[RMDB]
Structure probing data (2A3 and DMS) for a 177-nucleotide construct.
RNA sequence: GGGAACGACUCGAGUAGAGUCGAAAAGAGGCGCUUCGAGCGGUAGGAGUAAGACCAUAGCGAUAGGAGGAGAUGCUAGGAGUAGGGGGAGACCGAAGCGAGGAGGAAAGCAAAGAAAGCAACGGGGCCGUUUAUAUAGGUUCGCCUAUAUAAACGGAAAAGAAACAACAACAACAAC
Reactivity to 2A3 in 0.01 (KOAc 150mM, MgCl2 10mM, bicine 150mM(pH8.5), 24C), signal-to-noise 2, nucleotides 027 to 126: g050a020g060g010c030g000c070u050u060c090g040a010g010c030g040g080u090a040g040g040a030g020u080a130a010g040a040c020c050a080u080a020g030c030g080a080u090a100g050g020a010g000g020a080g000a060u070g020c030u030a020g020g010a040g040u170a120g010g000g010g010g000a050g010a020c030c040g020a030a020g000c020g030a000g010g010a020g000g040a120a000a000g000c040a090a080a000g040a060a060a010g040c020a040a000c030g010g000g040g000
Reactivity to DMS in 0.01 (KOAc 150mM, MgCl2 10mM, bicine 150mM(pH8.5), 24C), signal-to-noise 3, nucleotides 027 to 126: g010a150g000g000c080g010c040u000u010c080g020a090g010c050g010g000u010a060g000g020a060g040u010a110a080g000a100c060c070a090u010a050g030c070g000a100u010a040g010g000a070g020g000a070g000a050u000g000c050u000a060g010g010a070g020u000a070g010g010g020g000g000a090g000a050c060c050g000a080a040g020c120g010a040g020g010a070g000g000a060a080a070g010c070a090a050a120g010a080a060a030g000c030a030a040c050g010g020g000g010
The 2A3 profile rests on 2,256 reads. The reactions ran in a buffer of 150 mM KOAc, 10 mM MgCl2 and 150 mM bicine (pH 8.5), at 24 C.